Description: Conditions: 150 mM KOAc, 10 mM MgCl2 and 150 mM bicine (pH 8.5), 24 C. The record gives the reactivity of an RNA of 177 nucleotides to DMS and 2A3. Reactivities are given for positions 27 through 126. As a SHAPE reagent, 2A3 marks flexible, mostly unpaired nucleotides at the ribose 2'-OH. Source: RMDB library OK1LIB, as collected in RNAgym.

RNA sequence: GGGAACGACUCGAGUAGAGUCGAAAAGAGUAACCAACAAUGUGAUCUUGCUUGCGGAGGCAAGACUUGCACAGUAUCAAAUCUGCAAGUAGUGCUAUUGUUGGAAAGAAUACUGUGAAGGCAACAACCGAUAUAUGGUCUUCGGACCAUAUAUCGGAAAAGAAACAACAACAACAAC
Reactivity to DMS in 0.01 (KOAc 150mM, MgCl2 10mM, bicine 150mM(pH8.5), 24C), signal-to-noise 3, nucleotides 027 to 126: g000a100g010u000a120a300c030c000a000a000c000a010a000u000g000u010g020a130u040c020u030u000g020c000u000u000g010c000g000g000a030g010g020c280a130a040g000a030c060u000u020g030c110a070c060a020g020u010a010u000c080a040a190a130u000c010u000g000c000a010a010g000u010a020g020u000g010c050u010a020u000u000g000u010u000g020g000a020a090a080g000a080a050u010a010c030u010g010u000g000a120a060g000g000c150a070a120c180a100a070
Reactivity to 2A3 in 0.01 (KOAc 150mM, MgCl2 10mM, bicine 150mM(pH8.5), 24C), signal-to-noise 5, nucleotides 027 to 126: g090a010g020u070a040a020c000c000a000a000c010a010a000u210g060u080g300a300u100c040u050u030g000c000u020u030g000c010g000g100a030g030g060c050a050a040g030a060c000u000u090g030c000a020c000a030g000u010a010u130c050a090a100a100u000c000u000g000c000a010a000g000u000a010g180u030g110c010u020a010u020u010g000u000u000g000g020a040a000a000g020a040a000u040a000c000u020g000u030g080a070a030g130g010c040a050a040c010a050a020